An RNA of 177 nucleotides, treated with DMS and 2A3 and read out base by base. Reactivities are given for positions 27 through 126. The 2A3 profile rests on 2,428 reads.
RNA sequence: GGGAACGACUCGAGUAGAGUCGAAAAGAGGAUUCAACGAGCUUCGUAGCAACGAUAGCAACGUAGCUUUUGCUACGACCCAAGCUAUCGAGGGUAGCUACGUCCCCUGCUCGAGGGGAGAAUCCGAACUCCAGGCUAUGUUCGCAUAGCCUGGAGUAAAAGAAACAACAACAACAAC
Reactivity to DMS in 0.01 (KOAc 150mM, MgCl2 10mM, bicine 150mM(pH8.5), 24C), signal-to-noise 2, nucleotides 027 to 126: g030a160g030g010a020u000u000c010a070a050c110g010a180g010c160u000u000c000g030u010a010g010c010a130a180c020g000a000u010a000g030c000a190a150c020g010u000a000g000c000u000u010u010u020g000c000u000a000c000g000a110c200c130c140a120a100g000c020u000a000u000c010g000a110g000g030g030u000a160g000c000u000a000c020g010u000c010c010c000c000u000g020c090u000c040g010a040g000g000g000g000a040g000a000a000u010c000c000g010a160
Reactivity to 2A3 in 0.01 (KOAc 150mM, MgCl2 10mM, bicine 150mM(pH8.5), 24C), signal-to-noise 2, nucleotides 027 to 126: g140a020g010g020a000u030u000c040a040a020c110g120a040g090c080u060u060c020g000u000a000g010c000a040a100c020g010a010u010a000g040c010a020a080c000g000u010a010g000c000u130u140u290u300g000c000u000a010c000g120a130c060c010c020a030a040g000c000u020a000u010c010g000a040g090g080g050u100a070g000c000u000a030c010g000u010c000c010c000c000u030g030c070u060c030g090a050g000g040g000g000a030g000a000a000u000c000c000g010a040
2A3 adducts were read by reverse transcription with SuperScript II with manganese. High DMS reactivity at an A or C suggests that its Watson-Crick edge is free. The DMS profile rests on 1,974 reads.